An RNA of 177 nucleotides, treated with 2A3 and DMS and read out base by base. It was measured as part of the RMDB library OK2TRN. For 2A3 the reverse transcriptase was SuperScript II with manganese. DMS adducts were read by reverse transcription with MarathonRT. Reactivities are given for positions 27 through 126.
RNA sequence: GGGAACGACUCGAGUAGAGUCGAAAAGUACUGGUAAAGAAUUAGAAAAACGUCCUUACGCACCAGGACAACAUGGUCCAAACCAACGUAAAAAAUUAUCAGAAUAUGGUUUACAAUUACGUGAAAACGAAAUACUUUACUUCGGUAAAGUAUUUCGAAAAGAAACAACAACAACAAC
Reactivity to 2A3 in 0.01 (KOAc 150mM, MgCl2 10mM, bicine 150mM(pH8.5), 24C), signal-to-noise 2, nucleotides 027 to 126: g000u000a010c050u000g010g000u070a060a120a070g100a160a150u280u180a190g200a120a080a030a090a020c070g070u030c000c000u000u050a020c070g000c040a010c000c010a000g000g020a020c050a020a000c010a070u180g080g000u090c050c030a080a030a000c030c010a020a010c010g000u000a000a000a030a070a040a050u110u050a020u030c020a010g120a130a060u300a050u200g000g000u050u040u080a030c050a070a040u050u020a010c030g040u120g110a040a150a060a000
Reactivity to DMS in 0.01 (KOAc 150mM, MgCl2 10mM, bicine 150mM(pH8.5), 24C), signal-to-noise 2, nucleotides 027 to 126: g000u000a050c050u000g000g000u000a040a060a060g020a100a090u000u010a120g010a040a050a110a110a080c190g030u000c040c030u000u000a070c130g000c120a050c050c010a050g000g000a020c030a090a070c130a120u010g010g020u010c030c070a050a120a170c080c100a060a030c000g040u020a000a020a060a090a030a120u000u010a000u010c030a010g000a100a080u010a030u000g000g010u000u010u000a050c130a040a050u000u000a010c040g010u010g000a060a070a090a120